[RMDB]
RNA sequence: GGGAACGACUCGAGUAGAGUCGAAAAGAUAGGGGGUUCGCCCCCUAUCAAAGGUGCAAUGUACUUUCUGCACCAAAGUCGGAAAAACCGUCAAAGUACAAAAAACGAUGGCGUUCGCGCCAUCGAACCAACAGAUAUACUUCGGUAUAUCUGUUGGAAAAGAAACAACAACAACAAC
Reactivity to 2A3 in 0.01 (KOAc 150mM, MgCl2 10mM, bicine 150mM(pH8.5), 24C), signal-to-noise 2, nucleotides 027 to 126: g000a010u010a000g010g010g010g000g010u010u000c020g100c000c000c020c000c010u000a010u010c000a010a010a000g000g010u000g000c020a050a110u160g010u040a020c010u020u090u090c050u050g010c020a010c010c010a030a060a010g060u040c020g010g030a250a060a020a140a190c010c020g030u060c030a080a040a030g000u010a030c000a010a130a030a010a010a000c030g000a010u000g000g040c020g010u050u070c270g010c000g000c050c000a000u000c000g000a000a030
Reactivity to DMS in 0.01 (KOAc 150mM, MgCl2 10mM, bicine 150mM(pH8.5), 24C), signal-to-noise 1, nucleotides 027 to 126: g010a020u010a010g020g010g010g000g000u000u020c210g000c000c000c020c000c000u000a000u000c010a050a090a120g000g010u000g000c010a020a200u020g010u000a020c010u000u000u010c090u030g000c000a010c010c010a030a040a120g000u030c130g000g000a050a070a050a110a180c050c030g010u000c050a040a020a030g000u000a010c010a030a080a060a110a050a150c010g010a010u000g000g000c020g010u000u000c300g000c020g000c000c000a010u000c010g020a080a070